[RMDB]
RNA sequence: GGGAACGACUCGAGUAGAGUCGAAAAGAUAUGGAAAGAACUACAGCGAAAGUAGCGUUGAAAUCGGAAACGAUGGAGCUACUGAGCUGCUUUCCUAAGUCAAAACGGCAGUCUUCGGACUGCCGAACGAUUCGAAGGAGUUCGCUCCUUCGAAUCGAAAAGAAACAACAACAACAAC
Reactivity to 2A3 in 0.01 (KOAc 150mM, MgCl2 10mM, bicine 150mM(pH8.5), 24C), signal-to-noise 1, nucleotides 027 to 126: g010a000u060a010u140g000g000a000a080a000g020a070a100c160u210a050c290a010g040c020g020a070a050a070g000u000a010g010c060g110u220u070g030a020a040a000u000c010g020g040a060a060a110c050g000a010u040g010g010a020g000c000u000a000c000u010g000a010g000c010u000g000c000u020u010u000c010c000u000a130a020g100u040c050a050a030a100a130c030g020g000c010a010g020u020c000u090u110c270g110g010a010c010u000g030c010c010g000a010a000
Reactivity to DMS in 0.01 (KOAc 150mM, MgCl2 10mM, bicine 150mM(pH8.5), 24C), signal-to-noise 1, nucleotides 027 to 126: g000a070u000a300u000g000g000a050a000a000g000a060a030c050u030a300c020a010g000c040g010a100a150a010g020u000a000g010c000g000u000u010g030a120a080a030u010c000g020g000a140a030a080c000g000a010u000g020g000a040g030c000u000a000c000u000g000a300g030c010u020g000c010u000u000u000c000c000u000a070a150g000u030c060a080a010a030a220c000g010g030c000a020g000u000c000u000u000c280g060g010a010c000u000g040c000c000g010a000a070
Chemical mapping of a 177-nucleotide RNA with 2A3 and DMS. The DMS profile rests on 948 reads. The 2A3 profile rests on 1,447 reads. It was measured as part of the RMDB library TTRDEL. High 2A3 reactivity points to a flexible backbone, as in loops and unpaired stretches.